[RMDB]
RNA sequence: GGGAACGACUCGAGUAGAGUCGAAAACUCUUCCAGGACACGGCUUUGUACGUCGUUGACGGAGUCACAAACACCGUAGAAAAUGCCAGACAAGGUGCCGCCAAGCUAACAUCAUGGCUGGGGAAGCGGGACUACUUGAUUUCGAUCAAGUAGUCCCAAAAGAAACAACAACAACAAC
Reactivity to DMS in 0.01 (KOAc 150mM, MgCl2 10mM, bicine 150mM(pH8.5), 24C), signal-to-noise 3, nucleotides 027 to 126: c020u000c010u000u000c020c000a110g010g000a210c070a040c030g040g000c280u000u020u030g000u050a070c170g000u000c010g060u020u020g000a150c030g020g000a080g000u000c110a070c220a090a060a020c110a150c000c020g030u040a090g020a060a050a070a130u030g000c050c030a120g040a100c060a060a070g030g030u010g000c020c030g010c030c050a090a080g010c040u000a100a060c120a040u040c180a090u000g010g000c020u000g030g020g000g020a060a010g020c180
Reactivity to 2A3 in 0.01 (KOAc 150mM, MgCl2 10mM, bicine 150mM(pH8.5), 24C), signal-to-noise 3, nucleotides 027 to 126: c020u010c000u070u000c030c010a070g080g020a010c020a000c060g020g020c000u070u020u110g050u100a030c010g000u020c050g080u020u090g010a000c010g020g000a050g030u040c040a030c030a100a100a000c050a060c000c010g040u080a000g130a070a070a010a000u110g030c000c000a020g020a110c030a050a050g040g030u030g050c010c000g040c010c010a090a010g030c010u030a040a090c010a040u130c010a040u070g070g000c020u000g050g030g000g010a010a050g100c070

Structure probing data (DMS and 2A3) for a 177-nucleotide construct. For 2A3 the reverse transcriptase was SuperScript II with manganese. The DMS profile rests on 2,776 reads. Values cover nucleotides 27 to 126. DMS (dimethyl sulfate) methylates the pairing face of unpaired adenines and cytosines.